[RMDB]
RNA sequence: GGGAACGACUCGAGUAGAGUCGAAAAGCGCCGCCAACCUCGCCGCCGAGGGCAAGCGGGUCACGUUGGUCAGCAAGGACAUUCCGCUGCGCGUUAAGGCCGCCGCGGUGGGGCUGGCCGCCGACGAGUUGAUUACAGUUUUCGAACUGUAAUCAACAAAAGAAACAACAACAACAAC
Reactivity to DMS in 0.01 (KOAc 150mM, MgCl2 10mM, bicine 150mM(pH8.5), 24C), signal-to-noise 6, nucleotides 027 to 126: g000c090g020c060c230g010c010c020a030a060c010c000u000c010g020c050c050g010c050c110g000a070g010g010g020c140a120a100g010c010g000g000g010u010c070a060c050g010u000u010g040g020u010c040a050g010c080a100a150g010g000a100c160a170u010u000c040c030g010c020u000g000c040g000c030g000u000u010a080a080g000g010c030c010g010c020c120g010c010g010g020u000g010g000g000g020c020u000g000g010c010c070g010c020c040g010a090c110g000a140
Reactivity to 2A3 in 0.01 (KOAc 150mM, MgCl2 10mM, bicine 150mM(pH8.5), 24C), signal-to-noise 7, nucleotides 027 to 126: g020c050g010c050c040g000c010c000a000a010c010c000u010c010g020c040c010g050c040c050g130a290g000g080g010c050a030a020g020c020g040g010g120u240c030a010c050g030u060u190g170g040u190c020a020g030c060a180a230g090g010a080c080a270u280u020c040c020g000c020u020g000c030g000c000g020u030u080a080a030g030g020c000c010g020c020c010g010c010g000g000u020g000g000g000g000c000u000g000g000c000c000g000c010c010g030a050c040g060a090